Chemical mapping of a 207-nucleotide RNA with DMS and 2A3. For 2A3, 5,647 sequencing reads were counted.

RNA sequence: GGGAACGACUCGAGUAGAGUCGAAAAGGGGUCGUGAAAUCGAGAGGUUUAGCUUUUGACGGACUGAAGCCUCCACGGUCCGAUAAGCUAAACUACCCACCUCGGAUUCACGACGGAGGCACCCAAACCGUAAUUAUCCUUCGGGAUAAUUACGGAAACUAUGAGAAGGGUUCGCCCUUCUCAUAGUAAAAGAAACAACAACAACAAC
Reactivity to DMS in 0.01 (KOAc 150mM, MgCl2 10mM, bicine 150mM(pH8.5), 24C), signal-to-noise 2, nucleotides 027 to 156: g010g010g010g000u020c020g050u000g010a000a050a040u000c020g020a030g020a240g060g000u020u000u000a010g040c000u000u000u000u000g010a180c180g020g000a050c000u000g020a050a140g000c000c010u000c000c030a300c030g020g010u020c000c000g010a090u020a000a020g010c020u000a020a020a050c000u000a040c040c000c070a300c060c010u000c010g010g000a130u000u000c010a030c010g010a090c000g020g030a010g040g060c040a050c000c010c010a050a150a120c000c000g000u000a030a000u000u000a010u000c000c000u000u000c300g010g010g010a010u000a000a000u000u000a000c020g000g000a010a010
Reactivity to 2A3 in 0.01 (KOAc 150mM, MgCl2 10mM, bicine 150mM(pH8.5), 24C), signal-to-noise 4, nucleotides 027 to 156: g050g000g020g010u010c000g020u000g010a000a010a040u040c000g000a000g000a020g020g010u000u010u000a010g000c030u070u130u220u300g190a120c110g010g000a000c000u010g020a080a010g020c000c010u000c000c000a030c020g000g000u020c010c010g040a110u090a220a030g000c000u000a000a000a000c010u020a070c040c070c010a060c010c010u000c010g010g010a020u000u000c000a000c010g000a000c000g000g000a000g000g000c000a010c000c000c000a060a070a050c000c000g000u000a000a010u000u010a010u010c020c050u080u120c300g060g000g000a000u000a000a000u000u000a000c000g000g000a070a000
Record summary: DMS adducts were read by reverse transcription with MarathonRT. It was measured as part of the RMDB library RNAMAK. The DMS profile rests on 3,152 reads. The RNA was probed in 150 mM KOAc, 10 mM MgCl2 and 150 mM bicine (pH 8.5) at 24 C.